Annotation
The record gives the reactivity of an RNA of 177 nucleotides to DMS and 2A3. For DMS, 20,051 sequencing reads were counted.
RNA sequence: GGGAACGACUCGAGUAGAGUCGAAAAUCAGUGCUUGUAGGUACGUUAAUCGGUUUUGGACUACUCAGCAGUAAAGAAGCAGAUGCAAGUGAAAAUAGUGUUACGCAAUCUGAUAGCGCAAGUAACGCAUACCGGUAGGUUUCGACCUACCGGUAUGAAAAGAAACAACAACAACAAC
Reactivity to DMS in 0.01 (KOAc 150mM, MgCl2 10mM, bicine 150mM(pH8.5), 24C), signal-to-noise 7, nucleotides 027 to 126: u030c050a100g000u000g000c020u000u010g010u020a050g000g010u010a070c060g020u010u020a060a080u020c060g020g010u000u000u010u000g020g010a060c020u000a080c020u000c060a090g010c080a070g000u020a070a070a090g010a090a090g010c030a040g000a050u020g000c060a050a060g030u010g000a060a050a060a070u030a080g020u030g000u010u010a030c070g000c060a060a060u010c040u010g020a090u000a060g000c070g010c050a040a070g010u020a040a050c130g000
Reactivity to 2A3 in 0.01 (KOAc 150mM, MgCl2 10mM, bicine 150mM(pH8.5), 24C), signal-to-noise 6, nucleotides 027 to 126: u080c020a010g020u010g020c010u070u160g070u150a090g010g090u060a050c060g060u060u150a090a040u120c080g070g010u030u030u070u110g030g010a010c000u030a010c000u060c090a030g010c010a020g080u160a080a070a080g090a080a010g030c030a000g010a050u060g020c040a110a080g040u060g170a030a050a040a070u130a050g070u080g050u150u020a030c060g010c030a040a120u020c050u030g030a090u080a050g010c030g000c050a060a020g050u040a040a010c030g000